Record summary
The record gives the reactivity of an RNA of 170 nucleotides to 2A3.
RNA sequence: GGGAACGACUCGAGUAGAGUCGAAAAGAGGCCUCAUGUUCGUUACGACUUGUAUGAUGGUAACAUGUUUAUUAAAUUUCCUGAAGUAGUAUUUGAAAGUACACUUAGGAUUACUAGAACUCUGUCAGACCGGGGGGCUUCGGCCCCCCGAAAAGAAACAACAACAACAAC
Reactivity to 2A3 in 0.01 (KOAc 150mM, MgCl2 10mM, bicine 150mM(pH8.5), 24C), signal-to-noise 1, nucleotides 027 to 129: g000a000g000g010c000c000u000c000a000u080g000u210u100c060g000u020u030a010c020g000a030c090u060u000g020u080a040u150g090a000u180g030g050u020a000a000c000a000u090g000u000u150u000a010u000u160a140a020a000u030u000u000c000c000u000g040a060a000g000u300a050g000u000a070u030u250u050g130a090a040a000g000u080a000c000a000c000u040u100a000g000g000a000u000u150a070c150u010a000g020a080a000c000u000c020u110g000u000c000a050g050a000c000
2A3 adducts were read by reverse transcription with SuperScript II with manganese. Source: RMDB library 15KLIB, as collected in RNAgym.